[RMDB]
RNA sequence: GGGAACGACUCGAGUAGAGUCGAAAACUAUUUAUAGACAGAACAGUGGAAAACGUAUAUCGCUAUAAACCUUAUACUCCGAUUCUUCCAGUCGUACGAUUCCACAUAGGCGAGGCAUAAGCGAAAGGGCUAUAUCCUGGUUCGCCAGGAUAUAGCCAAAAGAAACAACAACAACAAC
Reactivity to 2A3 in 0.01 (KOAc 150mM, MgCl2 10mM, bicine 150mM(pH8.5), 24C), signal-to-noise 2, nucleotides 027 to 126: c020u000a060u010u130u020a180u000a000g110a020c010a110g120a220a040c040a050g080u070g040g030a130a100a060a000c000g010u030a020u040a080u070c000g070c040u010a020u010a200a060a050c000c000u090u100a130u120a070c000u080c110c000g000a020u180u000c010u120u000c000c000a000g040u130c110g000u010a000c000g050a000u040u070c050c000a000c030a060u060a020g120g010c000g020a000g000g000c000a000u010a300a030g030c100g090a000a010a010g140
Reactivity to DMS in 0.01 (KOAc 150mM, MgCl2 10mM, bicine 150mM(pH8.5), 24C), signal-to-noise 1, nucleotides 027 to 126: c000u000a150u000u010u000a090u070a050g000a050c060a090g000a000a000c010a080g040u050g000g020a080a000a100a170c130g000u000a080u000a190u000c070g080c030u000a160u000a070a030a080c090c030u000u000a220u110a000c050u000c000c020g000a110u000u000c080u000u030c000c140a180g000u010c080g020u000a030c000g040a120u000u000c040c000a030c010a030u090a020g000g000c280g090a000g000g020c050a160u070a140a000g000c000g000a030a000a160g000